[RMDB]
RNA sequence: GGGAACGACUCGAGUAGAGUCGAAAAGCCUUACGAUUCGUCGUAAGGCAUACAAAGUUUUGGCACUAUGAGCCCGGAGCGUUGGUGCUCCCACGCGGUGCAAUACGACGGAUUUCGAUCCGUCGAAGUCUCCCUGGAAGUUCGCUUCCAGGGAGACAAAAGAAACAACAACAACAAC
Reactivity to DMS in 0.01 (KOAc 150mM, MgCl2 10mM, bicine 150mM(pH8.5), 24C), signal-to-noise 1, nucleotides 027 to 126: g010c000c000u040u010a000c000g000a010u000u000c190g010u000c000g050u000a000a010g000g000c000a010u020a050c090a120a150a150g000u000u000u000u000g020g010c000a000c050u000a050u000g000a050g010c060c150c300g000g000a040g010c000g000u000u010g010g010u010g020c030u020c020c010c050a030c180g000c020g030g010u000g000c000a100a070u000a160c010g000a020c000g000g000a010u000u000u020c110g000a040u000c010c000g020u000c000g030a000a100
Reactivity to 2A3 in 0.01 (KOAc 150mM, MgCl2 10mM, bicine 150mM(pH8.5), 24C), signal-to-noise 2, nucleotides 027 to 126: g030c000c000u000u010a000c000g030a020u020u070c230g040u010c000g020u110a000a010g000g000c000a000u080a030c030a010a100a040g000u060u080u100u120g140g020c020a010c010u090a090u260g110a050g010c020c020c020g020g010a000g000c020g050u200u260g060g100u300g050c010u020c000c020c000a060c050g010c040g030g050u030g000c000a030a070u130a090c020g020a000c010g010g010a000u050u050u100c150g090a010u010c000c010g000u010c000g020a000a000

Source information
An RNA of 177 nucleotides, treated with DMS and 2A3 and read out base by base. Source: RMDB library M2PK50, as collected in RNAgym. The 2A3 profile rests on 1,502 reads.